[RMDB]
RNA sequence: GGGAACGACUCGAGUAGAGUCGAAAAUCGGCUACACUUGCCUAGAAAAACAUUACGUAAUUUAGGGGCUAAAUUGACUAUUCUUUCUAUAGUUUUAUCUGUAAUAUUUUCACAUCCAGAAAGAUCAUAUACAGUUAAAUUUCGAUUUAACUGUAUAAAAAGAAACAACAACAACAAC
Reactivity to DMS in 0.01 (KOAc 150mM, MgCl2 10mM, bicine 150mM(pH8.5), 24C), signal-to-noise 2, nucleotides 027 to 126: u010c100g010g030c020u000a080c140a070c160u010u010g010c020c000u010a160g000a030a040a080a060a020c070a080u000u000a060c070g000u010a030a050u000u000u010a050g000g010g010g040c040u000a020a050a030u000u000g010a060c010u000a020u010u000c070u000u010u020c040u000a100u000a020g000u000u010u010u020a050u020c060u010g000u010a020a030u000a110u010u010u000u000c050a050c110a070u010c060c070a100g000a090a050a050g010a090u010c130a090
Reactivity to 2A3 in 0.01 (KOAc 150mM, MgCl2 10mM, bicine 150mM(pH8.5), 24C), signal-to-noise 1, nucleotides 027 to 126: u030c000g000g030c030u120a000c110a040c120u200u100g030c000c010u030a010g140a030a050a020a000a000c040a030u020u110a020c030g000u010a020a080u030u050u140a030g020g040g080g000c010u040a100a000a050u090u060g040a020c000u040a060u070u060c060u070u160u030c020u170a080u040a040g010u000u050u080u180a060u030c030u050g010u000a030a040u020a150u130u030u110u100c080a090c020a090u000c040c000a030g040a060a070a000g060a030u140c010a070